[RMDB]
Chemical mapping of a 207-nucleotide RNA with DMS and 2A3. As a SHAPE reagent, 2A3 marks flexible, mostly unpaired nucleotides at the ribose 2'-OH. For DMS the reverse transcriptase was MarathonRT. Reactivities are given for positions 27 through 156. The RNA was probed in 150 mM KOAc, 10 mM MgCl2 and 150 mM bicine (pH 8.5) at 24 C. It was measured as part of the RMDB library M2RFPK.
RNA sequence: GGGAACGACUCGAGUAGAGUCGAAAAACACCAAAACUGAAAACGGAAUGCAAUCCUUCCACGACGAUACUUACUUUCCUUUGAUCGUCGUUACUACUGGCAUAGCCACAAAGGAGAACAAACAUGAGCGCGGACACUGACUUCGGUCAGUGUCCAAUCUCUCUUUAUAGUUCGCUAUAAAGAGAGAAAAAGAAACAACAACAACAAC
Reactivity to DMS in 0.01 (KOAc 150mM, MgCl2 10mM, bicine 150mM(pH8.5), 24C), signal-to-noise 2, nucleotides 027 to 156: a050c040a180c050c050a060a060a100a150c070u000g000a050a050a080a100c080g020g000a090a090u000g040c070a120a220u000c040c020u010u000c000c060a170c050g030a040c020g040a060u000a070c060u000u000a080c080u010u010u000c100c110u000u000u000g020a030u000c000g030u000c000g010u020u010a050c050u000a080c080u000g040g000c010a110u000a140g010c020c030a070c050a040a060a040g000g000a060g020a080a110c070a090a050a070c100a060u000g000a100g030c060g010c110g020g070a000c020a000c000u000g000a010c000u000u010c250g010g010u000c000a010g050u000g010u000c000c010a010a050
Reactivity to 2A3 in 0.01 (KOAc 150mM, MgCl2 10mM, bicine 150mM(pH8.5), 24C), signal-to-noise 8, nucleotides 027 to 156: a000c060a070c010c030a070a050a040a050c100u150g050a060a060a030a050c080g040g020a050a020u080g030c070a030a130u080c010c030u050u040c030c030a010c000g000a000c000g000a010u100a210c020u080u030a030c020u080u170u130c040c020u080u050u060g010a010u020c010g010u000c000g000u020u060a040c020u020a030c020u010g000g000c050a170u100a120g020c020c010a040c070a040a050a010g030g010a030g020a070a030c050a070a080a020c060a100u180g070a050g110c130g000c060g060g000a000c000a000c000u000g010a000c000u030u050c180g020g000u000c000a000g000u000g000u010c000c000a000a000